[RMDB]
Chemical mapping of a 207-nucleotide RNA with 2A3 and DMS. The DMS profile rests on 1,758 reads. Source: RMDB library OK3TST, as collected in RNAgym. DMS adducts were read by reverse transcription with MarathonRT. Reactivities are given for positions 27 through 156. Conditions: 150 mM KOAc, 10 mM MgCl2 and 150 mM bicine (pH 8.5), 24 C.
RNA sequence: GGGAACGACUCGAGUAGAGUCGAAAACCUCUCUCUGGGCCCCGCCUUGCCCAACUCUCCCAGUCGAGGAGCGCAACUUUGCUGAGUUCAACUUCAUCAACGAGCAGAACUUGGAGCUGGAGCAUGUGCAGGAAGAGAUCAAGGAGGUGAGUGAGGAUGCUGGUAUAAUCUUCGGAUUAUACCAGCAAAAAGAAACAACAACAACAAC
Reactivity to 2A3 in 0.01 (KOAc 150mM, MgCl2 10mM, bicine 150mM(pH8.5), 24C), signal-to-noise 2, nucleotides 027 to 156: c000c010u040c000u010c000u010c010u030g010g060g100c000c050c000c000g010c000c010u000u010g040c010c010c010a070a070c040u100c000u000c030c010c020a030g100u110c060g040a060g020g040a040g030c070g000c020a070a100c060u140u230u280g030c050u080g020a010g040u050u030c030a130a080c020u110u050c010a160u070c030a080a110c120g010a060g020c050a050g030a070a030c010u020u020g030g030a020g000c030u030g020g000a110g030c040a010u100g100u150g020c010a020g000g030a070a030g020a020g000a020u090c020a040a050g020g000a020g000g060u060g010a070g020u080g020a040g060g090a040
Reactivity to DMS in 0.01 (KOAc 150mM, MgCl2 10mM, bicine 150mM(pH8.5), 24C), signal-to-noise 1, nucleotides 027 to 156: c060c110u010c030u000c040u000c020u000g010g010g030c000c020c070c020g000c000c020u010u000g030c010c000c010a060a010c030u000c010u000c000c030c020a300g020u010c080g010a090g020g000a030g010c000g010c030a160a050c030u020u010u000g070c050u000g010a090g000u010u010c030a070a040c010u000u000c020a070u010c140a060a170c040g030a090g030c040a190g010a040a260c070u000u000g010g000a080g070c010u000g000g020a110g020c050a020u010g010u010g030c030a110g040g010a080a060g000a050g000a080u000c040a110a080g000g000a030g030g030u010g040a070g010u000g010a100g000g020a300